[RMDB]
RNA sequence: GGGAACGACUCGAGUAGAGUCGAAAAGAUCGAGGUCUGCCCACUUCCUCAUAUAUCCUAUACACGGCAGACUUCGAUAGGCGUGAGAAUGAGGAAGUGGUAGAUAUGUGGGUUCUCAUGCCUCACACUACACCUAUCUAUUCGUAGAUGGGUGUAGAAAAGAAACAACAACAACAAC
Reactivity to 2A3 in 0.01 (KOAc 150mM, MgCl2 10mM, bicine 150mM(pH8.5), 24C), signal-to-noise 9, nucleotides 027 to 126: g120a010u020c010g000a000g000g010u000c000u000g000c010c010c000a010c010u010u010c010c010u020c040a010u100a020u030a020u190c010c030u090a070u030a250c130a050c180g090g000c000a000g010a010c000u000u000c000g000a010u020a020g020g000c020g000u020g010a020g020a030a040u030g000a010g010g000a010a010g000u010g010g050u150a060g070a170u150a090u290g100u100g020g020g000u020u000c020u000c010a010u030g000c000c000u020c000a040c000a000
Reactivity to DMS in 0.01 (KOAc 150mM, MgCl2 10mM, bicine 150mM(pH8.5), 24C), signal-to-noise 9, nucleotides 027 to 126: g000a040u000c010g010a020g000g000u000c010u000g010c010c020c040a030c030u000u000c000c000u000c010a090u010a150u010a080u000c020c030u000a110u010a120c140a130c240g010g010c010a010g000a020c010u000u000c010g010a010u000a010g010g010c020g020u000g000a020g000a040a020u000g010a020g000g000a020a020g020u000g010g020u020a080g010a140u010a070u010g020u000g010g000g010u000u000c020u000c010a020u000g000c020c000u000c090a070c220a200

This 177-nucleotide RNA was probed chemically with 2A3 and DMS. Values cover nucleotides 27 to 126. It was measured as part of the RMDB library OK2TRN. For DMS the reverse transcriptase was MarathonRT. The DMS profile rests on 109,016 reads.